[RMDB]
RNA sequence: GGGAACGACUCGAGUAGAGUCGAAAAUGUAAACCCGAACUGAUUGUCAUACAGAACAGGAUCGUCGCGUAGCACGUUGUGGGCGAAGUGACUAAAACUUACACAACUCAUCCAAAGCACCCUGCCCGUCGGGCGGCUGCGGAUUAAAUCAGUAGACCAUUAAGAUACUGUUCGCAGUAUCUUAAUGAAAAGAAACAACAACAACAAC
Reactivity to DMS in 0.01 (KOAc 150mM, MgCl2 10mM, bicine 150mM(pH8.5), 24C), signal-to-noise 3, nucleotides 027 to 156: u010g040u000a060a100a120c020c010c010g010a120a110c030u000g020a050u000u010g000u010c080a180u000a280c060a110g030a090a140c070a070g000g020a070u000c050g040u000c050g000c080g020u000a110g010c030a050c090g000u000u000g020u010g000g020g030c040g000a110a160g040u000g010a130c070u000a080a050a100a080c080u000u010a090c030a070c040a020a040c000u010c050a070u000c050c020a040a300a140g000c020a030c020c010c020u000g020c020c050c030g000u000c080g040g020g030c000g020g000c010u000g030c300g000g000a070u010u000a040a060a070u000c020a040g000u000a090g010a130c170
Reactivity to 2A3 in 0.01 (KOAc 150mM, MgCl2 10mM, bicine 150mM(pH8.5), 24C), signal-to-noise 4, nucleotides 027 to 156: u230g030u090a050a060a100c000c010c010g020a070a020c040u020g030a090u150u060g070u110c060a020u130a190c050a090g090a130a020c020a070g030g040a090u110c060g000u010c000g000c000g060u060a000g000c000a010c050g010u020u020g000u010g000g000g000c010g030a030a000g010u020g030a010c020u040a010a000a030a040c030u110u120a020c030a000c010a030a050c020u020c040a030u010c000c010a050a020a000g000c000a040c000c010c020u040g020c000c020c010g090u080c050g020g000g010c020g060g000c000u010g000c000g000g000a000u010u020a000a020a000u050c020a010g070u050a020g050a030c050
Record summary
Chemical mapping of a 207-nucleotide RNA with DMS and 2A3. For 2A3 the reverse transcriptase was SuperScript II with manganese. It was measured as part of the RMDB library RSTRND. For 2A3, 3,229 sequencing reads were counted. The reactions ran in a buffer of 150 mM KOAc, 10 mM MgCl2 and 150 mM bicine (pH 8.5), at 24 C.